[RMDB]
RNA sequence: GGGAACGACUCGAGUAGAGUCGAAAAGCUAACAGAGGCACUUGCUAAUGACAUAACACCGAUUAUUUACCCAAUUAUAGCAGAUCAGCAUUACUGGGCUAAUAAGGUCAAAGAAUUGGGUUACGGAAUUCUAGGUUUAAUUCGUUAAACCUAGAAUAAAAGAAACAACAACAACAAC
Reactivity to 2A3 in 0.01 (KOAc 150mM, MgCl2 10mM, bicine 150mM(pH8.5), 24C), signal-to-noise 5, nucleotides 027 to 126: g030c030u040a100a050c010a050g070a070g090g000c050a030c130u100u110g000c020u060a100a030u080g040a020c010a090u130a080a030c050a040c050c010g020a030u060u050a080u070u270u070a030c000c010c010a010a010u070u030a060u090a090g070c060a010g040a120u060c030a000g070c000a010u010u040a100c070u170g100g120g000c010u020a020a050u100a190a070g030g010u020c030a060a030a110g030a070a030u020u010g010g010g000u010u030a030c030g020g030a040
Reactivity to DMS in 0.01 (KOAc 150mM, MgCl2 10mM, bicine 150mM(pH8.5), 24C), signal-to-noise 8, nucleotides 027 to 126: g010c060u010a070a110c100a080g010a230g000g020c030a120c120u010u010g010c040u000a070a150u010g010a090c090a080u000a060a070c100a100c020c010g000a110u000u010a100u000u000u000a060c010c000c010a020a030u000u000a090u010a070g020c110a150g010a080u000c070a050g020c150a070u000u000a060c080u010g000g010g010c050u000a030a050u010a070a120g000g010u000c040a040a110a080g000a030a030u000u000g000g010g010u000u000a080c100g010g000a150